The record gives the reactivity of an RNA of 177 nucleotides to 2A3 and DMS. DMS adducts were read by reverse transcription with MarathonRT. The DMS profile rests on 1,973 reads. The 2A3 profile rests on 2,521 reads.
[RMDB]
RNA sequence: GGGAACGACUCGAGUAGAGUCGAAAAGAUAUGGAAAUUAUACGCUCGAUAAGUCGAGUAUCGGAAACGAUACCGACUUUUGACGAGCGUAAUUUCCUAAGUCAAAACACAAUCUUCGGAUUGUGAACGUGACAUACUUGUUCGCAAGUAUGUCACGAAAAGAAACAACAACAACAAC
Reactivity to 2A3 in 0.01 (KOAc 150mM, MgCl2 10mM, bicine 150mM(pH8.5), 24C), signal-to-noise 2, nucleotides 027 to 126: g030a020u060a020u090g010g070a000a040a020u170u080a240u090a300c030g030c030u010c040g150a120u090a300a000g010u010c000g040a100g080u010a010u010c000g020g000a030a010a030c010g030a010u010a000c050c010g010a000c000u040u010u040u050g150a050c020g000a020g000c000g000u000a010a010u000u000u000c000c000u020a040a000g020u000c000a090a020a280a000c060a000c020a010a010u030c010u080u090c300g150g000a010u010u040g010u000g060a080a050
Reactivity to DMS in 0.01 (KOAc 150mM, MgCl2 10mM, bicine 150mM(pH8.5), 24C), signal-to-noise 2, nucleotides 027 to 126: g000a060u000a300u000g000g010a010a000a020u000u010a110u000a090c100g000c010u000c000g020a150u000a010a010g010u010c000g000a210g020u000a000u000c000g000g000a070a090a090c000g010a000u000a000c000c000g000a020c000u000u020u000u010g010a210c190g010a010g010c000g020u000a000a000u000u010u000c000c010u000a070a100g000u010c030a090a100a110a140c010a000c000a020a000u000c000u010u020c240g000g010a020u010u000g020u000g020a080a090

It was measured as part of the RMDB library TTRDES.